[RMDB]
RNA sequence: GGGAACGACUCGAGUAGAGUCGAAAAGAUAUGGACAUCCGGUAGGGAGCUGAUACUCGGAAACGAGUAUACCAGCUUUGAUCUACGAUGUCCUAAGUCAAAAGACUCAUGGUUCGCCAUGAGUCAACGCAUAGUGUAAGUUCGCUUACACUAUGCGAAAAGAAACAACAACAACAAC
Reactivity to 2A3 in 0.01 (KOAc 150mM, MgCl2 10mM, bicine 150mM(pH8.5), 24C), signal-to-noise 3, nucleotides 027 to 126: g000a000u020a000u040g000g000a000c000a000u010c090c180g120g010u020a000g020g010g030a010g000c010u010g010a010u000a010c010u010c010g000g000a000a010a000c010g000a000g020u000a010u040a040c230c050a010g000c000u200u220u050g010a000u000c000u000a000c010g010a000u010g000u000c000c000u000a000a000g000u000c000a020a000a060a250g010a000c000u000c000a010u010g000g070u070u100c300g030c080c010a000u010g040a010g000u000c010a000a010
Reactivity to DMS in 0.01 (KOAc 150mM, MgCl2 10mM, bicine 150mM(pH8.5), 24C), signal-to-noise 7, nucleotides 027 to 126: g000a020u000a030u010g000g000a030c010a010u000c020c300g020g020u000a000g010g000g000a000g030c000u000g010a050u000a000c000u000c000g010g000a000a000a030c000g010a010g000u000a010u000a070c300c030a000g000c000u010u010u020g000a010u010c000u000a010c010g020a000u000g010u000c010c000u010a000a020g000u010c010a050a120a060a180g000a010c000u000c010a010u000g000g000u010u010c300g000c000c000a000u000g000a010g000u000c000a020a070